An RNA of 207 nucleotides, treated with 2A3 and read out base by base. It was measured as part of the RMDB library OK3TST. 2A3 adducts were read by reverse transcription with SuperScript II with manganese. The reactions ran in a buffer of 150 mM KOAc, 10 mM MgCl2 and 150 mM bicine (pH 8.5), at 24 C. High 2A3 reactivity points to a flexible backbone, as in loops and unpaired stretches. For 2A3, 1,075 sequencing reads were counted.
RNA sequence: GGGAACGACUCGAGUAGAGUCGAAAACAAUUAAGAAUGGAUAACACGAAAAUGGGUAAACUACAGGAUGGAUCAAGCAGGAGCUGAGGAAAUGUGCUUCUCCUCUUUCUCCUUCUCCUCAUAGCUGACACUUAUUGAAUGUUUACCAUGUGUCGGAUCGACUAAAUCGGUUCGCCGAUUUAGUCGAAAAAGAAACAACAACAACAAC
Reactivity to 2A3 in 0.01 (KOAc 150mM, MgCl2 10mM, bicine 150mM(pH8.5), 24C), signal-to-noise 3, nucleotides 027 to 156: c050a060a090u270u280a100a110g050a090a070u100g030g030a040u050a120a050c100a020c100g090a100a090a020a060u100g020g000g040u050a050a030a010c030u080a050c090a090g070g020a080u140g000g050a070u120c110a100a000g060c050a020g030g010a000g010c140u040g050a010g000g060a020a080a080u190g070u110g080c040u070u030c010u020c070c000u000c000u020u120u040c030u000c010c000u000u030c010u030c000c000u130c050a060u060a030g060c070u010g120a030c040a020c080u130u160a070u080u130g080a100a040u090g000u020u000u020a040c000c000a030u050g080u040g020u040c050g010g040a010